[RMDB]
RNA sequence: GGGAACGACUCGAGUAGAGUCGAAAACAGGGCUAUGAUGGUAUGUAUGGGCAGGGACCUCCUAGUGUUCAUAGCAGUCAUGGCAGCAGGCCUUAUCAGCAGCAAGGUUAUGACACGUUACCAAUAGACAGUAACACGUGUUCGCACGUGUUACUGUAAAAGAAACAACAACAACAAC
Reactivity to DMS in 0.01 (KOAc 150mM, MgCl2 10mM, bicine 150mM(pH8.5), 24C), signal-to-noise 3, nucleotides 027 to 126: c070a130g010g020g000c070u000a070u020g000a080u010g010g000u000a030u010g020u000a050u010g010g000g010c050a110g000g010g020a120c100c100u000c050c020u000a100g020u000g000u010u000c060a050u010a050g000c010a070g000u000c090a040u000g010g010c020a090g010c090a140g010g000c020c030u000u000a080u010c110a110g000c040a040g010c060a070a060g010g010u000u000a040u010g000a060c080a150c090g010u000u000a080c060c020a030a110u010a080g000
Reactivity to 2A3 in 0.01 (KOAc 150mM, MgCl2 10mM, bicine 150mM(pH8.5), 24C), signal-to-noise 2, nucleotides 027 to 126: c020a030g040g070g000c030u040a010u150g090a070u080g110g030u100a030u120g160u020a040u150g010g050g000c010a010g010g080g020a070c010c020u050c000c010u100a080g090u010g050u070u040c010a020u030a050g000c010a020g030u070c020a000u060g040g000c030a020g040c000a030g040g120c000c000u070u090a130u070c050a020g050c030a000g010c010a050a060g090g000u080u070a090u110g010a010c000a000c090g050u050u060a040c000c030a040a020u070a030g180